[RMDB]
RNA sequence: GGGAACGACUCGAGUAGAGUCGAAAAGAUAUGGACGGCAACGUACAAUUAUUUAUUGGAGAUCCAGCUCGGAAACGAGCUGAAGAUCGAUGAAGAUACGGAUAAUUGUACGUUGCCGUCCUAAGUCCUAAUAUUGACAGUUCGCUGUCAAUAUUAGAAAAGAAACAACAACAACAAC
Reactivity to DMS in 0.01 (KOAc 150mM, MgCl2 10mM, bicine 150mM(pH8.5), 24C), signal-to-noise 9, nucleotides 027 to 126: g010a120u010a290u010g010g010a010c010g010g000c010a010a010c010g000u010a000c000a010a010u000u000a010u000u000u000a050u010u000g000g010a150g000a020u000c000c010a010g010c000u000c000g000g010a110a130a210c010g010a020g010c000u000g000a090a120g010a000u000c000g020a150u020g010a200a160g000a040u010a030c300g000g000a010u000a000a000u000u000g010u000a000c010g010u000u000g010c000c000g000u000c000c000u000a010a020g000u000c030
An RNA of 177 nucleotides, treated with DMS and read out base by base. For DMS the reverse transcriptase was MarathonRT. The reactions ran in a buffer of 150 mM KOAc, 10 mM MgCl2 and 150 mM bicine (pH 8.5), at 24 C. For DMS, 10,473 sequencing reads were counted. Reactivities are rounded to 0.1 and cut off at 0 and 3.